[RMDB]
RNA sequence: GGGAACGACUCGAGUAGAGUCGAAAAAGGGCUGGAUUCGUCCAGCCCUGCACAUUCGUACGCAACGAAGCGUACGACAUUACGCAAAUGACGUAAAGCGUAGAACCACGGACUUCGGUCCGUGGAACUACUCUAACGAUUUCGAUCGUUAGAGUAGAAAAGAAACAACAACAACAAC
Reactivity to DMS in 0.01 (KOAc 150mM, MgCl2 10mM, bicine 150mM(pH8.5), 24C), signal-to-noise 9, nucleotides 027 to 126: a010g000g000g010c000u010g010g010a020u000u010c190g020u000c000c000a000g010c000c000c000u000g000c100a080c160a130u010u000c000g010u010a000c010g010c010a100a130c300g010a160a120g000c000g010u000a000c010g010a020c300a030u000u000a010c000g010c000a060a080a080u000g000a100c200g000u000a050a070a170g010c040g000u000a060g010a090a170c000c000a000c000g000g010a020c000u000u010c150g010g010u000c000c000g020u000g000g010a010a060
Reactivity to 2A3 in 0.01 (KOAc 150mM, MgCl2 10mM, bicine 150mM(pH8.5), 24C), signal-to-noise 8, nucleotides 027 to 126: a000g010g000g000c000u000g000g010a020u040u060c150g040u020c050c000a000g000c000c000c000u000g000c000a020c010a120u040u040c000g000u000a000c010g000c060a210a100c220g240a220a050g000c000g000u010a000c000g000a000c000a070u070u060a010c010g000c010a050a100a240u190g100a060c070g100u150a050a050a070g020c020g010u020a040g050a100a040c000c000a000c000g000g010a000c000u040u060c220g050g000u000c000c000g000u000g000g000a000a000
Chemical mapping of a 177-nucleotide RNA with DMS and 2A3. The data come from the RNA Mapping Database (RMDB), library M2PK50. The RNA was probed in 150 mM KOAc, 10 mM MgCl2 and 150 mM bicine (pH 8.5) at 24 C.